[RMDB]
RNA sequence: GGGAACGACUCGAGUAGAGUCGAAAACAGAACUGUACAGCAAGUCAGAAGCGGAGCUGGGAUUUGGUCCAGGUCUUCUGACUUCCUUACUACACAGGGAACUGGGAUUCCUGGCUGGCAGUAGGAGUCGAGUUCUUACAUUCGUGUAAGAACUCGAAAAAGAAACAACAACAACAAC
Reactivity to 2A3 in 0.01 (KOAc 150mM, MgCl2 10mM, bicine 150mM(pH8.5), 24C), signal-to-noise 2, nucleotides 027 to 126: c020a010g110a070a030c020u040g000u110a280c040a000g000c030a010a030g030u000c010a030g030a020a020g000c130g090g200a040g080c010u060g040g030g020a140u120u170u300g080g050u010c010c020a040g050g050u060c000u010u040c000u000g030a000c010u010u010c000c000u000u020a050c030u090a000c100a010c010a020g000g020g020a050a060c070u110g040g140g160a300u150u070c000c000u000g090g050c000u020g000g000c030a000g000u020a040g040g050a040g040
Reactivity to DMS in 0.01 (KOAc 150mM, MgCl2 10mM, bicine 150mM(pH8.5), 24C), signal-to-noise 2, nucleotides 027 to 126: c030a110g000a100a090c030u020g000u000a120c070a020g030c040a080a030g000u000c010a000g000a010a030g000c300g000g000a110g000c000u000g000g010g020a180u000u020u010g000g040u020c020c000a010g020g000u000c010u000u020c000u000g000a030c000u000u000c100c020u010u010a160c140u020a050c150a070c110a050g030g000g000a050a070c030u000g000g000g010a250u000u000c040c020u000g020g030c070u000g000g000c020a030g020u000a120g010g000a130g020
Conditions: 150 mM KOAc, 10 mM MgCl2 and 150 mM bicine (pH 8.5), 24 C.
Structure probing data (2A3 and DMS) for a 177-nucleotide construct.
DMS adducts were read by reverse transcription with MarathonRT.
Reactivities are given for positions 27 through 126.